[RMDB]
RNA sequence: GGGAACGACUCGAGUAGAGUCGAAAAAGGAAGAUCUGCAAAAGUACGUCUAUCAACUACGUAUUGAUGCAAAGAUUAUGAUAGUCGAAUUAGCCGAUCCAGAGAUCUCCAAGAAUGCCUUCGAACACCUAUCCUGCUGAUUCGUCAGCAGGAUAGGAAAAGAAACAACAACAACAAC
Reactivity to 2A3 in 0.01 (KOAc 150mM, MgCl2 10mM, bicine 150mM(pH8.5), 24C), signal-to-noise 2, nucleotides 027 to 126: a010g100g030a070a090g000a050u000c020u110g020c030a020a010a000a090g010u020a030c020g010u000c000u050a150u140c020a070a070c080u060a010c020g000u030a000u060u130g060a040u110g010c010a110a080a020g020a040u130u100a070u110g110a100u060a020g050u030c040g060a050a110u080u010a090g020c050c040g020a050u030c010c030a030g010a000g000a130u010c020u000c020c020a040a040g080a110a040u100g070c040c030u020u120c090g020a070a020c040a030
Reactivity to DMS in 0.01 (KOAc 150mM, MgCl2 10mM, bicine 150mM(pH8.5), 24C), signal-to-noise 3, nucleotides 027 to 126: a080g010g000a110a080g000a030u000c040u010g060c010a030a050a200a010g020u030a050c000g000u000c140u000a300u020c140a070a060c110u010a010c060g020u020a040u020u000g010a300u010g010c110a080a050a100g000a070u000u000a060u000g010a070u000a040g000u000c040g000a080a080u000u010a090g000c020c020g000a060u000c040c100a110g000a100g000a020u000c020u000c000c070a080a090g000a070a070u000g010c030c090u000u020c090g010a090a090c300a110